[RMDB]
RNA sequence: GGGAACGACUCGAGUAGAGUCGAAAAGGAGGACCCCUUCGACCGGCUAUUCUUCCUGGCGCUGUAGCUCAACCUCCCGUCGCUGGUGUUCGUCUAAAAGCUUUGCCCCCAUUGCCUGUCGCCGAUGCACUAUCCCCCAAUUCGUUGGGGGAUAGUGAAAAGAAACAACAACAACAAC
Reactivity to DMS in 0.01 (KOAc 150mM, MgCl2 10mM, bicine 150mM(pH8.5), 24C), signal-to-noise 3, nucleotides 027 to 126: g000g010a140g030g000a180c070c060c010c030u000u000c090g010a070c070c070g020g000c070u010a080u010u000c060u000u010c020c000u000g010g010c050g010c080u000g030u000a080g020c010u010c060a070a120c070c040u000c010c020c030g010u000c080g020c040u000g000g010u010g000u000u000c060g000u000c030u010a040a090a070a110g010c050u010u000u000g020c020c000c000c010c040a070u000u000g000c020c010u000g010u010c060g010c070c040g030a100u000g010
Source: RMDB library OK2TST, as collected in RNAgym. This 177-nucleotide RNA was probed chemically with DMS. For DMS, 2,808 sequencing reads were counted.